[RMDB]
Chemical mapping of a 207-nucleotide RNA with 2A3. The RNA was probed in 150 mM KOAc, 10 mM MgCl2 and 150 mM bicine (pH 8.5) at 24 C. Values cover nucleotides 27 to 156.

RNA sequence: GGGAACGACUCGAGUAGAGUCGAAAAGUUCAUCCCCUGAUCAAGGAUGCCCGAAACGGUGAGGCGGAAAGCAAUUUAAAUAACGUCAACCCAUCGGGACGGUUGGCCAGUUAAGAAGUGAGGAUUCAAAAGAUCGAACCGUUCGCGGUUCGAUCAAGGAAAGCCAAUACUUCGGUAUUGGCUUUCCAAAAGAAACAACAACAACAAC
Reactivity to 2A3 in 0.01 (KOAc 150mM, MgCl2 10mM, bicine 150mM(pH8.5), 24C), signal-to-noise 2, nucleotides 027 to 156: g000u010u030c050a030u060c000c000c000c030u020g000a020u040c030a020a010g000g000a020u040g000c000c000c000g030a080a100a000c080g000g030u030g000a110g020g000c010g030g060a160a020a010g030c120a080a090u060u120u200a160a150a080u170a110a010c030g000u000c010a000a000c010c000c000a020u030c000g000g000g010a000c000g010g000u020u030g010g000c040c050a040g000u090u060a120a030g060a090a030g040u080g080a020g020g030a050u050u020c060a080a040a040a110g000a000u000c000g000a000a000c000c000g000u020u050c230g010c000g050g000u000u000c000g000a000u000c000a000a000